[RMDB]
An RNA of 207 nucleotides, treated with DMS and 2A3 and read out base by base. Conditions: 150 mM KOAc, 10 mM MgCl2 and 150 mM bicine (pH 8.5), 24 C. For DMS the reverse transcriptase was MarathonRT. It was measured as part of the RMDB library OK3TST. For 2A3 the reverse transcriptase was SuperScript II with manganese.
RNA sequence: GGGAACGACUCGAGUAGAGUCGAAAAGGUCAAAUGUCAGCUCAUGAGUAAUUGUCUUCAACAACUCUAUGUAUUCCUAGGGAUGACAAUAAACACCCCUUCGUGGCAAAGGCCCUCAGGAAAGGAGUAGGUAUUCCUGGCCCUGAACCUGCCUAUACGCAGAAGUACAUUUCGAUGUACUUCUGCGAAAAGAAACAACAACAACAAC
Reactivity to DMS in 0.01 (KOAc 150mM, MgCl2 10mM, bicine 150mM(pH8.5), 24C), signal-to-noise 1, nucleotides 027 to 156: g000g000u010c090a050a130a120u000g000u010c000a060g030c110u020c030a060u000g010a120g000u000a080a120u000u000g010u010c070u010u010c090a120a070c080a030a050c000u000c030u000a110u020g030u000a040u010u000c000c030u010a090g010g060g030a050u000g010a100c010a160a200u010a070a040a190c010a120c030c000c010c120u000u000c130g030u010g000g000c010a040a100a080g000g000c010c000c050u000c060a050g010g010a090a060a060g010g010a110g050u000a050g000g020u010a070u000u000c000c000u010g010g020c100c000c020u050g000a030a030c050c040u010g030c000c000u000a040u000a090
Reactivity to 2A3 in 0.01 (KOAc 150mM, MgCl2 10mM, bicine 150mM(pH8.5), 24C), signal-to-noise 2, nucleotides 027 to 156: g050g030u040c030a040a050a070u110g010u040c000a020g000c040u020c030a060u070g040a000g020u080a090a120u080u060g090u050c060u290u180c130a060a050c000a030a020c060u010c020u080a060u130g080u020a120u140u140c020c020u030a040g010g010g010a040u060g010a060c020a040a020u190a090a090a030c070a070c030c010c000c000u050u090c100g100u100g020g000c010a150a100a120g020g000c000c000c050u030c010a020g000g030a030a030a060g010g020a060g050u130a090g170g000u170a090u080u010c010c030u050g090g040c030c000c000u040g030a160a210c010c010u020g000c000c000u080a070u000a050